[RMDB]
RNA sequence: GGGAACGACUCGAGUAGAGUCGAAAAACGGCGGCUCAACGCUACUCCGGCACCGCUGAUUGGGCACAGAUCGCCCAACUCAAACAGCAGGUAAGGACGAUUCCUGUGCUCGGCAAUGGGGACAUCACCUAAAUCCCACUUUCGAGUGGGAUUUAGGAAAAGAAACAACAACAACAAC
Reactivity to DMS in 0.01 (KOAc 150mM, MgCl2 10mM, bicine 150mM(pH8.5), 24C), signal-to-noise 2, nucleotides 027 to 126: a110c090g000g000c030g000g000c300u010c090a080a100c160g000c030u000a050c070u010c020c010g000g010c030a170c000c030g000c000u000g000a160u000u020g020g020g010c000a060c060a040g000a110u010c040g010c000c000c000a060a040c040u000c050a010a160a180c210a120g030c110a050g050g010u020a140a150g000g000a030c060g030a080u000u000c110c040u000g040u000g020c020u000c040g000g030c060a080a100u000g000g000g010g020a190c180a060u000c160a160
Reactivity to 2A3 in 0.01 (KOAc 150mM, MgCl2 10mM, bicine 150mM(pH8.5), 24C), signal-to-noise 2, nucleotides 027 to 126: a000c030g020g000c020g020g010c040u050c200a100a050c100g000c030u050a100c010u020c010c000g000g020c040a020c010c040g000c010u000g030a210u100u180g010g030g000c010a020c030a030g070a040u070c020g030c000c010c010a030a050c020u020c010a160a190a290c050a080g220c050a050g010g100u150a110a090g040g010a000c000g010a030u090u110c000c020u050g010u030g000c020u000c020g010g000c070a060a090u090g000g000g020g040a020c010a110u100c030a090